[RMDB]
RNA sequence: GGGAACGACUCGAGUAGAGUCGAAAACAGAUAGCGACUGGUCCACGUGCUCAGACACGGACGACGAGUUACGACUAGACAGGGCAGGUGGGUAUAUAUUCUCGUCGGACACUGGUCCAGGUCAUUAGCUCGUCCCUGAGUUCGCUCAGGGACGAGCAAAAGAAACAACAACAACAAC
Reactivity to 2A3 in 0.01 (KOAc 150mM, MgCl2 10mM, bicine 150mM(pH8.5), 24C), signal-to-noise 2, nucleotides 027 to 126: c020a040g230a290u080a060g070c010g070a030c000u000g040g070u000c030c000a060c140g070u040g000c140u080c190a130g050a230c030a000c030g000g080a010c000g000a000c000g030a040g000u150u150a080c030g000a030c040u000a040g080a100c050a010g180g000g000c040a030g060g070u060g060g110g090u080a060u000a000u000a010u130u000c000u000c000g000u000c000g010g050a050c140a020c080u030g010g000u120c000c000a090g110g050u020c020a020u130u050a010